[RMDB]
RNA sequence: GGGAACGACUCGAGUAGAGUCGAAAAAGGUGAUUUCUCCUGCACCUUUAUCAAUGGAGGAACUCGACUUUGCUGUGUGUCCCAAAGGGACCUUAGGUGCAGACAGUUACCGGCGGUGAAGUGUGAGCAUAGGUUCGUGUCUUCGGACACGAACCAAGUGCAAUGUGAUGUUCGCAUCACAUUGCACAAAAGAAACAACAACAACAAC
Reactivity to 2A3 in 0.01 (KOAc 150mM, MgCl2 10mM, bicine 150mM(pH8.5), 24C), signal-to-noise 2, nucleotides 027 to 156: a000g020g010u020g000a050u060u080u000c000u010c000c030u130g100c080a030c000c040u070u280u160a050u050c080a010a040u290g000g000a000g000g030a030a060c030u030c030g000a010c000u070u010u030g010c030u030g000u030g000u050g010u120c000c030c000a120a060a080g000g000g010a010c000c030u050u200a050g000g010u040g000c010a010g080a300c080a080g040u030u120a010c000c000g000g000c000g000g000u020g000a000a000g010u040g120u090g100a010g030c030a120u130a170g010g010u000u000c000g000u000g000u000c010u030u020c090g060g000a000c000a000c000g000a000a000c000c000a000a000